[RMDB]
RNA sequence: GGGAACGACUCGAGUAGAGUCGAAAACCAUCUUGGUGCAGGCGAGCCAAGAAUGCGUUUUAACAACGUAUCCUUUCCACAUACUAUUUGCAUUGCACAGCGAUAGUAUGGAUGGGACAUUGGUAUUAGGACGUAUACACUUCGGUGUAUACGUCCUAAAAGAAACAACAACAACAAC
Reactivity to DMS in 0.01 (KOAc 150mM, MgCl2 10mM, bicine 150mM(pH8.5), 24C), signal-to-noise 1, nucleotides 027 to 126: c000c000a100u000c000u000u000g000g000u000g020c020a020g000g020c020g020a300g000c020c020a000a000g000a040a020u000g010c060g010u000u000u000u090a100a140c200a030a000c000g000u000a040u000c050c010u010u000u000c000c000a060c130a010u000a090c000u000a020u000u000u010g040c000a050u000u010g030c220a110c300a120g060c000g000a000u000a000g000u000a000u000g000g010a060u000g010g000g010a130c010a100u010u010g000g020u000a080u000u000
Reactivity to 2A3 in 0.01 (KOAc 150mM, MgCl2 10mM, bicine 150mM(pH8.5), 24C), signal-to-noise 1, nucleotides 027 to 126: c010c000a040u020c000u000u020g060g030u060g050c170a200g010g060c070g060a010g010c000c000a000a000g000a000a020u070g000c000g010u020u000u020u130a270a140c080a000a020c000g030u010a050u110c000c030u060u090u070c000c000a040c000a080u000a000c000u000a040u010u110u300g040c020a050u000u300g000c110a060c000a060g000c010g000a000u000a010g010u010a000u000g000g020a000u080g020g010g020a000c050a080u120u220g080g000u170a110u100u010